[RMDB]
RNA sequence: GGGAACGACUCGAGUAGAGUCGAAAACUUUGGAGACCCUUUAAGAGAUAGCUGUCUACCAAAGCCAUUUUGCAACGUCUACACCCUUGUUCCGGCUAUAAAGAUUGAACAUGAGACUUAUUUAGGGGACUAAAAUAAUGUUCGCAUUAUUUUAGUCAAAAGAAACAACAACAACAAC
Reactivity to DMS in 0.01 (KOAc 150mM, MgCl2 10mM, bicine 150mM(pH8.5), 24C), signal-to-noise 6, nucleotides 027 to 126: c030u000u000u000g000g010a100g010a090c010c200c030u010u020u040a100a110g010a100g000a070u020a050g000c110u020g010u010c000u000a150c010c020a000a050a040g010c060c100a110u010u020u010u020g010c070a050a050c080g000u010c010u000a060c070a100c050c040c040u000u000g010u010u000c020c070g010g040c020u000a060u010a040a080a070g010a110u020u000g020a050a060c090a060u020g000a100g000a100c050u010u030a050u020u020u020a070g030g000g000
Reactivity to 2A3 in 0.01 (KOAc 150mM, MgCl2 10mM, bicine 150mM(pH8.5), 24C), signal-to-noise 9, nucleotides 027 to 126: c010u030u020u050g020g010a030g020a020c030c030c000u040u100u120a250a110g080a020g020a060u130a070g040c110u060g030u010c010u070a280c030c000a020a010a010g010c010c010a130u140u130u070u090g050c060a080a040c040g010u000c010u040a030c020a050c030c010c000u000u030g020u060u020c020c020g040g000c030u040a050u080a240a130a020g100a090u100u140g030a040a020c020a060u120g040a030g030a100c030u070u090a100u190u160u130a070g010g020g050
About this RNA
Chemical mapping of a 177-nucleotide RNA with DMS and 2A3. The DMS profile rests on 14,134 reads. The reactions ran in a buffer of 150 mM KOAc, 10 mM MgCl2 and 150 mM bicine (pH 8.5), at 24 C. Source: RMDB library OK1LIB, as collected in RNAgym. DMS adducts were read by reverse transcription with MarathonRT. Values cover nucleotides 27 to 126.